The record gives the reactivity of an RNA of 207 nucleotides to 2A3 and DMS.
High 2A3 reactivity points to a flexible backbone, as in loops and unpaired stretches.
Values cover nucleotides 27 to 156.
The DMS profile rests on 2,701 reads.
The RNA was probed in 150 mM KOAc, 10 mM MgCl2 and 150 mM bicine (pH 8.5) at 24 C.
For DMS the reverse transcriptase was MarathonRT.
For 2A3, 1,299 sequencing reads were counted.
2A3 adducts were read by reverse transcription with SuperScript II with manganese.
RNA sequence: GGGAACGACUCGAGUAGAGUCGAAAAGUUGGUGGCGGCAAGGGUGAAGGAACGGCCCGCACGUUCCGCAGCGCAUCAGACGCCGCUCUCGCCACCCAGUACGGCCGGAAGAUCGAGGUCUUCACGGACGCCCGCAACGGCGAGACAAACGCGGAGAGCUAAAACAAAUAUUCGUAUUUGUUUUAGCAAAAGAAACAACAACAACAAC
Reactivity to 2A3 in 0.01 (KOAc 150mM, MgCl2 10mM, bicine 150mM(pH8.5), 24C), signal-to-noise 2, nucleotides 027 to 156: g150u170u080g020g030u020g020g010c020g020g030c150a180a220g050g020g010u060g040a130a160g040g010a000a000c000g060g000c000c030c000g020c030a040c000g000u000u000c010c000g040c060a010g030c000g010c060a150u110c070a120g120a080c010g000c000c000g000c000u010c000u000c010g000c000c000a000c000c000c010a020g050u150a040c010g030g000c020c000g000g000a020a010g000a000u060c060g090a070g060g120u010c000u020u020c110a150c060g020g020a020c000g000c000c000c000g000c010a080a120c050g050g000c020g020a030g010a050c080a060a110a010c080g020c030g010g020a060g020a000
Reactivity to DMS in 0.01 (KOAc 150mM, MgCl2 10mM, bicine 150mM(pH8.5), 24C), signal-to-noise 1, nucleotides 027 to 156: g000u010u000g040g070u000g030g010c020g030g050c010a070a130g030g030g000u000g000a270a170g000g030a020a050c020g000g000c080c050c070g060c030a160c020g010u000u000c000c000g020c040a150g040c070g050c110a170u030c180a110g010a110c060g040c010c040g000c000u000c000u020c010g020c020c000a060c000c000c020a250g000u000a050c010g000g000c000c000g000g010a080a010g000a020u000c040g000a170g050g000u000c000u000u020c000a130c000g010g030a020c020g010c010c040c040g020c030a070a090c050g000g000c030g000a070g000a150c050a060a100a040c070g010c000g020g000a300g020a250